[RMDB]
RNA sequence: GGGAACGACUCGAGUAGAGUCGAAAAGUACCUUUCGGUGGGAAUAUGUACAUAGCACUGGCAGCUUGCAUUGGGGUAUCCCUAGGGCUUGUCACAUUAAUAUGCUGCUGCAAGGGGAGGUGUAAGAACGUAAUGGGUCAUUCGUGACCCAUUACGUAAAAGAAACAACAACAACAAC
Reactivity to 2A3 in 0.01 (KOAc 150mM, MgCl2 10mM, bicine 150mM(pH8.5), 24C), signal-to-noise 1, nucleotides 027 to 126: g000u070a100c000c000u020u220u100c070g020g040u050g050g050g100a040a020u130a070u230g070u050a010c020a100u150a040g060c010a000c070u010g020g000c000a000g000c000u070u150g000c040a040u030u070g040g000g030g020u050a090u190c000c010c000u030a040g030g050g000c020u020u110g030u030c010a000c000a070u060u110a070a020u140a070u180g040c000u000g010c010u020g000c020a080a030g040g010g030g000a030g000g050u060g000u030a140a000g020a050
Reactivity to DMS in 0.01 (KOAc 150mM, MgCl2 10mM, bicine 150mM(pH8.5), 24C), signal-to-noise 2, nucleotides 027 to 126: g010u000a100c040c030u000u020u000c070g000g010u000g010g000g000a110a120u010a050u010g000u000a110c120a070u030a100g020c070a090c060u010g020g000c030a030g010c030u000u010g020c060a120u000u000g010g000g040g020u010a060u000c010c000c000u000a180g030g020g000c060u010u010g000u000c030a070c100a060u000u020a050a130u010a060u000g000c020u010g030c000u000g000c030a030a030g000g040g010g000a090g000g000u010g010u010a090a070g010a120

An RNA of 177 nucleotides, treated with 2A3 and DMS and read out base by base. It was measured as part of the RMDB library OK2TST. DMS adducts were read by reverse transcription with MarathonRT.